Chemical mapping of a 177-nucleotide RNA with 2A3 and DMS.
[RMDB]
RNA sequence: GGGAACGACUCGAGUAGAGUCGAAAAACACAAUGCUUAAUGUUGCCAAGAUAGGUCUCGCAAAUUCAACAGCCGAGCGGAUUGACCGUAUGCUAUUUGGGAAGGAAAACCCUGAACAUAGUAGAGCGCACAGCACUUAAUUCGUUAAGUGCUGUGCAAAAGAAACAACAACAACAAC
Reactivity to 2A3 in 0.01 (KOAc 150mM, MgCl2 10mM, bicine 150mM(pH8.5), 24C), signal-to-noise 3, nucleotides 027 to 126: a000c130a040c080a040a150u170g030c080u120u170a050a000u180g010u070u050g060c020c020a110a030g060a130u120a020g030g030u000c020u010c040g000c020a000a110a260u260u180c090a120a060c020a080g020c020c020g050a010g000c010g040g030a090u060u120g010a030c030c000g090u060a020u080g040c000u020a070u020u130u030g040g000g030a050a040g020g050a000a050a060a160c010c000c000u060g050a090a030c040a040u020a050g050u010a040g040a020g090c020
Reactivity to DMS in 0.01 (KOAc 150mM, MgCl2 10mM, bicine 150mM(pH8.5), 24C), signal-to-noise 2, nucleotides 027 to 126: a050c090a100c150a090a090u000g020c050u030u000a070a120u000g030u030u000g020c050c030a020a130g000a150u070a070g000g010u020c020u000c030g030c100a000a080a040u040u000c160a090a060c040a100g000c050c090g020a120g070c050g020g000a170u020u020g000a040c050c000g000u000a140u000g020c020u000a030u000u000u050g010g000g060a130a010g000g020a070a080a050a140c050c020c000u000g000a130a080c050a000u000a060g050u000a000g050a120g030c100

For 2A3 the reverse transcriptase was SuperScript II with manganese. The reactions ran in a buffer of 150 mM KOAc, 10 mM MgCl2 and 150 mM bicine (pH 8.5), at 24 C. The DMS profile rests on 2,144 reads. High DMS reactivity at an A or C suggests that its Watson-Crick edge is free. The data come from the RNA Mapping Database (RMDB), library OK1LIB.